[RMDB]
RNA sequence: GGGAACGACUCGAGUAGAGUCGAAAAGACUGGCAGACGCCCUUUACGCAAACGCUCGAUCACAGCAAUCCGCCGUUUGCCCGUUGGUUUUGUGAAGGCCGAACCAACUUGUGCCACAACGCCAUCGUAAAGUCGGACCAUUCGUGGUCCGACUUUAAAAAGAAACAACAACAACAAC
Reactivity to DMS in 0.01 (KOAc 150mM, MgCl2 10mM, bicine 150mM(pH8.5), 24C), signal-to-noise 1, nucleotides 027 to 126: g000a110c090u000g000g030c060a120g070a050c130g030c030c030c030u000u000u000a100c170g010c060a030a090a090c050g000c030u000c200g020a140u000c110a040c140a160g000c140a040a080u020c080c100g030c300c010g030u000u000u000g010c000c050c090g000u010u000g000g000u000u000u000u030g010u020g000a120a140g000g010c020c150g020a020a060c030c020a040a020c060u000u000g030u000g040c010c020a020c110a040a140c190g010c000c050a020u000c080g000